The record gives the reactivity of an RNA of 207 nucleotides to 2A3 and DMS.
For 2A3 the reverse transcriptase was SuperScript II with manganese.
Conditions: 150 mM KOAc, 10 mM MgCl2 and 150 mM bicine (pH 8.5), 24 C.
RNA sequence: GGGAACGACUCGAGUAGAGUCGAAAAUCUGAAGUUAUGAGCUUUGGACAGCAGGAUGGCGAAUUAAGGUGGUGGAAAAGGAAACUUUGAUGUUGGAGAAACUGGUGUAGCUCAGAACGUAGAACAGAAAAAGCCAACUAUUUGGCCAAAGUAUCCAACCCAUUACGUAGUUCGCUACGUAAUGGGUAAAAGAAACAACAACAACAAC
Reactivity to 2A3 in 0.01 (KOAc 150mM, MgCl2 10mM, bicine 150mM(pH8.5), 24C), signal-to-noise 3, nucleotides 027 to 156: u020c030u050g030a040a020g020u120u060a110u190g060a050g010c010u030u070u040g040g010a020c020a040g040c020a030g000g070a050u100g050g010c040g030a060a030u090u100a130a040g010g030u040g010g020u020g010g030a020a000a000a020g070g040a100a030a030c020u040u000u090g050a050u040g030u030u030g010g000a020g040a060a020a000c030u030g010g010u020g020u030a010g020c010u010c040a010g020a030a000c060g020u110a010g020a110a040c060a040g120a070a120a010a020a040g030c060c020a030a000c080u140a150u170u080u010g000g010c010c000a000a100a000g030u030a040u140c120c000a000
Reactivity to DMS in 0.01 (KOAc 150mM, MgCl2 10mM, bicine 150mM(pH8.5), 24C), signal-to-noise 2, nucleotides 027 to 156: u010c030u000g010a060a080g040u000u000a100u000g010a200g000c000u000u000u000g020g070a100c050a110g010c060a100g000g000a080u020g000g060c060g020a070a120u000u000a050a100g020g020u000g000g000u000g000g000a040a040a050a090g020g000a110a060a090c080u000u000u000g000a100u010g050u000u000g010g010a070g010a120a060a070c050u000g010g040u010g030u000a060g010c020u010c040a110g000a060a030c090g010u000a110g010a070a150c050a130g010a020a040a050a090a080g000c020c000a020a050c130u000a260u000u000u000g020g020c010c020a020a020a120g020u000a130u000c020c020a140